[RMDB]
Chemical mapping of a 177-nucleotide RNA with DMS and 2A3. For DMS, 1,583 sequencing reads were counted. The data come from the RNA Mapping Database (RMDB), library OK2TRN. Reactivities are given for positions 27 through 126. The RNA was probed in 150 mM KOAc, 10 mM MgCl2 and 150 mM bicine (pH 8.5) at 24 C.

RNA sequence: GGGAACGACUCGAGUAGAGUCGAAAACUACGCCUGGUACGCCCGGAAUGUUGUCGGACUUAUCACCCAUUAGUGCCAGGUAGUCCACAAUAAGCUCAGGACCAAUGCCGAACUUUUUCACCACACCCGCCAUGUAGAUAUUCGUAUCUACAUGGCGAAAAGAAACAACAACAACAAC
Reactivity to DMS in 0.01 (KOAc 150mM, MgCl2 10mM, bicine 150mM(pH8.5), 24C), signal-to-noise 2, nucleotides 027 to 126: c060u000a080c110g000c010c040u030g020g010u000a050c040g030c030c050c040g000g020a080a070u000g000u000u010g000u000c090g040g010a060c040u000u000a060u010c120a090c030c010c030a120u010u010a100g040u010g000c000c020a040g000g010u000a000g020u000c010c020a050c130a060a070u000a090a060g030c060u010c050a070g000g000a040c040c050a050a000u000g000c030c030g000a080a050c130u000u000u000u000u000c050a150c080c070a070c090a110c120c030
Reactivity to 2A3 in 0.01 (KOAc 150mM, MgCl2 10mM, bicine 150mM(pH8.5), 24C), signal-to-noise 2, nucleotides 027 to 126: c000u070a020c080g000c030c010u000g000g010u030a000c050g050c010c000c000g110g060a170a100u150g060u090u120g060u190c130g080g020a050c030u090u170a110u160c050a070c010c040c000a090u110u220a040g030u050g020c000c000a000g000g000u000a000g010u000c000c000a050c020a030a090u130a100a030g000c040u030c090a000g000g020a100c050c020a060a030u070g000c010c010g030a060a050c080u050u090u010u080u060c080a050c040c000a060c010a060c050c040